[RMDB]
Description:
The data come from the RNA Mapping Database (RMDB), library RNAMAK. An RNA of 207 nucleotides, treated with 2A3 and DMS and read out base by base. The DMS profile rests on 12,708 reads. Reactivities are given for positions 27 through 156. Conditions: 150 mM KOAc, 10 mM MgCl2 and 150 mM bicine (pH 8.5), 24 C.
RNA sequence: GGGAACGACUCGAGUAGAGUCGAAAAUAAUCAACUUCGGUUGAUUAGCGCAUCCUAAGUCUUCUCGAGCCCGGACGACGAUCAUCCUCGGAAACGAGGAUGGGAGUCCGUGCUAAGACAGGAAGAUAUGGAGAUAAGCUGCGAUUCGUCGCAGCAAAACUACAGUCCAAUUCGUUGGACUGUAGUUAAAAGAAACAACAACAACAAC
Reactivity to 2A3 in 0.01 (KOAc 150mM, MgCl2 10mM, bicine 150mM(pH8.5), 24C), signal-to-noise 5, nucleotides 027 to 156: u070a000a000u000c000a000a010c000u050u060c210g120g000u010u000g000a010u010u010a020g030c110g020c070a110u040c000c000u040a170a080g020u000c000u010u000c080u030c040g050a010g000c040c130c010g000g000a010c010g040a060c010g000a010u010c000a000u000c000c000u000c000g000g040a070a060a080c010g010a000g000g000a000u000g000g000g000a010g000u000c000c000g000u000g000c000u010a060a040g080a070c060a040g060g010a000a010g010a010u030a040u110g030g010a060g020a090u140a170a060g000c010u010g010c000g000a010u010u080c210g050u040c030g090c010a000g000c030a040a050
Reactivity to DMS in 0.01 (KOAc 150mM, MgCl2 10mM, bicine 150mM(pH8.5), 24C), signal-to-noise 5, nucleotides 027 to 156: u000a030a040u000c000a010a010c010u000u000c300g050g010u000u000g010a010u000u000a030g000c090g010c100a180u000c000c000u000a110a260g010u000c010u000u010c010u000c030g010a050g010c010c020c020g010g010a020c010g020a080c090g020a130u000c000a010u000c000c000u000c010g000g000a150a140a300c010g010a020g010g010a010u000g000g010g010a170g010u000c010c010g030u000g000c010u010a050a100g030a210c300a060g000g020a040a030g010a060u010a300u000g000g000a090g000a180u000a050a180g010c010u000g000c000g020a080u000u000c290g030u000c000g020c020a030g000c000a010a020